[RMDB]
RNA sequence: GGGAACGACUCGAGUAGAGUCGAAAACAUAGCGUUUCACAAUGUGCGCCAUUACCAUUGUUUAUGCAAGCACGUUUCGCAAUGUACGGCGCAGAAACAUUGCCAACACAAAUACGCUUCACGAUGUAAAACAUCGGUGCGUUCGCGCACCGAUGAAGUUUUCAACGUACUUCGGUACGUUGAAAACAAAAGAAACAACAACAACAAC
Reactivity to 2A3 in 0.01 (KOAc 150mM, MgCl2 10mM, bicine 150mM(pH8.5), 24C), signal-to-noise 2, nucleotides 027 to 156: c040a020u080a000g010c000g000u000u020u080c150a000c000a010a090u000g020u030g020c020g000c000c000a040u100u170a040c010c120a000u030u000g070u040u160u100a200u250g020c180a060a080g170c090a050c130g000u050u120u110c030g010c000a010a020u040g030u040a020c080g000g000c040g000c000a000g080a000a030a000c010a010u000u010g030c030c040a150a020c020a040c030a200a220a000u080a020c010g020c000u060u070c100a120c110g110a030u070g070u300a050a130a000a000c000a000u020c000g000g000u000g010c000g000u030u060c080g000c030g000c020a000c000c000g000a000u000g010a000a000